[RMDB]
RNA sequence: GGGAACGACUCGAGUAGAGUCGAAAAGAAUUGGUAUGUAAGCUACUUCUUCCAGUAGCUGCGUCAUAACAUAAAGGUUAUGCAUACUGAGCCGAAGCUCAGCUUCGGUCCUCCAAGGAAGACCAAAUACAGCUCAGCCCGUUCGCGGGCUGAGCAAGUACACGCUAUAGUUCGCUAUAGCGUGUACAAAAGAAACAACAACAACAAC
Reactivity to DMS in 0.01 (KOAc 150mM, MgCl2 10mM, bicine 150mM(pH8.5), 24C), signal-to-noise 1, nucleotides 027 to 156: g010a170a120u000u000g020g000u010a010u000g000u020a300a300g000c000u010a010c000u000u010c040u000u000c000c060a300g060u000a010g000c000u000g000c000g120u000c020a010u000a020a010c010a300u010a080a210a150g010g000u000u000a000u000g000c030a040u010a010c010u000g020a180g010c020c010g020a110a010g030c010u040c150a070g000c000u000u000c000g030g020u000c020c010u000c050c100a060a170g000g030a000a040g040a220c100c030a060a060a170u000a090c110a120g000c010u010c000a010g000c000c000c000g020u000u000c300g040c100g030g000g000c000u000g000a000g010c010a010a010
Reactivity to 2A3 in 0.01 (KOAc 150mM, MgCl2 10mM, bicine 150mM(pH8.5), 24C), signal-to-noise 3, nucleotides 027 to 156: g100a010a080u020u020g000g000u010a010u000g000u000a000a000g000c000u010a000c010u090u110c010u020u000c010c000a000g010u000a000g000c000u000g000c000g000u010c000a000u000a000a010c010a010u220a130a230a030g300g000u000u000a000u000g000c000a000u000a000c000u000g000a010g000c000c000g000a000a000g020c020u070c300a030g010c010u020u000c000g000g000u000c000c030u040c040c040a040a040g000g000a000a010g010a000c000c080a010a080a060u210a130c080a020g000c000u010c000a000g000c000c000c000g070u110u110c210g010c010g070g040g010c000u000g000a010g000c000a000a000